Notes
The data come from the RNA Mapping Database (RMDB), library M2RFPK. The record gives the reactivity of an RNA of 207 nucleotides to 2A3. Values cover nucleotides 27 to 156. Values are in units of 0.01, from 0 to 300, in steps of 10. The reactions ran in a buffer of 150 mM KOAc, 10 mM MgCl2 and 150 mM bicine (pH 8.5), at 24 C.
RNA sequence: GGGAACGACUCGAGUAGAGUCGAAAAGGUGAAAGCGAAUCGGGGAAGAUAAGCUAGCAGCAAAAAGGAACCGAUUCCCACCAAGUUCGGAAAGAGAUACCGGGCGAGGCGCUGAAGAAAGAAUCUAAAACUCCCGCAAGUUUCGACUUGCGGGAAAGAAUCAAAUGGAGUUCGCUCCAUUUGAUUCAAAAGAAACAACAACAACAAC
Reactivity to 2A3 in 0.01 (KOAc 150mM, MgCl2 10mM, bicine 150mM(pH8.5), 24C), signal-to-noise 1, nucleotides 027 to 156: g010g010u000g040a170a030a030g020c040g010a000a000u020c030g000g050g000g030a020a080g040a160u080a010a100g000c000u130a050g090c110a020g050c040a110a000a000a160a000g150g000a010a010c000c000g000a010u000u000c020c000c000a020c040c000a010a050g010u020u000c040g040g020a170a080a100g050a050g010a000u050a090c040c000g000g000g000c020g010a050g000g020c050g010c050u110g050a050a000g000a030a140a030g000a050a030u110c060u120a090a050a120a200c040u000c000c020c010g020c000a000a000g000u000u170u160c140g020a050c020u000u000g010c000g000g000g010a020a000a000